[RMDB]
RNA sequence: GGGAACGACUCGAGUAGAGUCGAAAACGGUUGAUUCGUCCAUGAGGACGAGGAUAAGGGUAGAACGUCUUACUAGCACUAGGACGAUAAUGACCCGAAAGGCAACCUUCAAAUGCUUUAAUCUCAAUUAUGACAAUACCUUCGGGUAUUGUCAUAAAAAAGAAACAACAACAACAAC
Reactivity to DMS in 0.01 (KOAc 150mM, MgCl2 10mM, bicine 150mM(pH8.5), 24C), signal-to-noise 8, nucleotides 027 to 126: c130g030g000u010u000g000a090u020u010c000g000u010c000c000a270u060g020a200g010g000a010c000g000a010g010g020a150u030a080a130g000g000g010u000a050g010a250a140c010g010u000c010u000u000a010c030u000a170g000c180a210c300u000a010g000g000a010c000g010a040u010a060a170u060g000a040c010c000c000g000a030a070a090g010g000c020a010a010c020c020u010u010c160a080a070a080u020g010c080u010u010u010a060a150u000c020u000c040a060a290
Reactivity to 2A3 in 0.01 (KOAc 150mM, MgCl2 10mM, bicine 150mM(pH8.5), 24C), signal-to-noise 3, nucleotides 027 to 126: c030g040g000u000u030g030a090u050u000c010g000u000c000c020a130u270g150a150g090g000a000c010g000a000g000g000a070u080a120a130g030g000g020u020a060g020a300a040c000g000u010c020u010u000a050c020u010a010g000c020a000c010u000a000g000g020a000c000g000a030u030a140a060u150g040a000c000c000c020g020a060a020a020g070g000c000a000a000c000c000u020u080c100a080a050a040u130g030c040u070u100u250a130a110u080c030u000c050a060a240
The data come from the RNA Mapping Database (RMDB), libraries RFM100 and RFMREP. An RNA of 177 nucleotides, treated with DMS and 2A3 and read out base by base. The RNA was probed in 150 mM KOAc, 10 mM MgCl2 and 150 mM bicine (pH 8.5) at 24 C. DMS adducts were read by reverse transcription with MarathonRT.